RNA sequence: GGGAACGACUCGAGUAGAGUCGAAAAGAAAGAAAGAAAGAAAUCUGACAGAAUGACGGAUUCGAUCGUUGUGGUCGGCGGGCCACCACGUCAUUCAUUCGCACUGUCUCCGGGCAGACCGCCAUAAAAAAGCGGAUCUACUUCGGUAGAUCCGCAAUCCUAUCCUGUACUUCGGUACAGGAUAGGAAAAAGAAACAACAACAACAAC
Reactivity to 2A3 in 0.01 (KOAc 150mM, MgCl2 10mM, bicine 150mM(pH8.5), 24C), signal-to-noise 1, nucleotides 027 to 156: g080a020a070a000g070a010a040a000g060a120a000a000g060a000a180a050u080c070u100g020a050c020a190g080a100a110u060g050a030c010g070g050a100u110u180c110g130a050u130c050g000u060u060g000u000g000g010u000c050g000g070c000g000g000g000c000c010a000c000c000a050c030g020u020c000a000u030u020c010a010u080u140c020g020c030a050c040u010g000u010c010u060c050c010g000g020g020c010a010g020a040c000c000g000c000c000a040u200a040a120a040a000a040a000g000c000g000g000a000u000c000u000a000c000u030u040c090g040g000u000a000g010a000u000c000c000g000c000a000a000